[RMDB]
Chemical mapping of a 177-nucleotide RNA with 2A3 and DMS. Values are in units of 0.01, from 0 to 300, in steps of 10. The RNA was probed in 150 mM KOAc, 10 mM MgCl2 and 150 mM bicine (pH 8.5) at 24 C. For DMS, 3,198 sequencing reads were counted.
RNA sequence: GGGAACGACUCGAGUAGAGUCGAAAAGGGCGUCAUUUCGAUGACGCCCAUACGUCUACUCCGAUUGCCGAGGACGACGCCGACGGGCGCGUUUGCCAAUCGCACCGUCCAGAUUCGUCUGGACGAAACCCUUUGCAAAGUUCGCUUUGCAAAGGGUAAAAGAAACAACAACAACAAC
Reactivity to 2A3 in 0.01 (KOAc 150mM, MgCl2 10mM, bicine 150mM(pH8.5), 24C), signal-to-noise 3, nucleotides 027 to 126: g040g000g000c020g030u000c010a020u030u050u150c220g100a000u010g000a010c000g000c000c000c000a000u010a000c000g050u020c010u000a010c010u000c050c010g030a030u000u050g040c050c030g100a090g030g050a040c030g100a200c000g010c010c010g210a300c170g080g010g020c010g000c010g000u010u010u040g040c000c010a020a020u020c010g000c030a050c090c010g000u000c010c000a000g000a030u010u060c080g080u000c100u010g000g000a000c000g000a080a000
Reactivity to DMS in 0.01 (KOAc 150mM, MgCl2 10mM, bicine 150mM(pH8.5), 24C), signal-to-noise 3, nucleotides 027 to 126: g000g010g010c000g020u000c010a000u000u000u020c190g020a010u000g000a000c010g020c000c000c000a000u000a010c220g030u000c000u010a010c000u000c020c020g020a040u000u000g000c130c150g000a120g020g000a010c010g010a120c020g030c010c020g010a120c300g010g000g010c020g000c010g010u000u000u010g020c110c000a020a010u000c030g020c110a120c170c010g010u000c000c010a000g000a020u000u020c100g000u010c010u000g000g000a000c010g000a020a060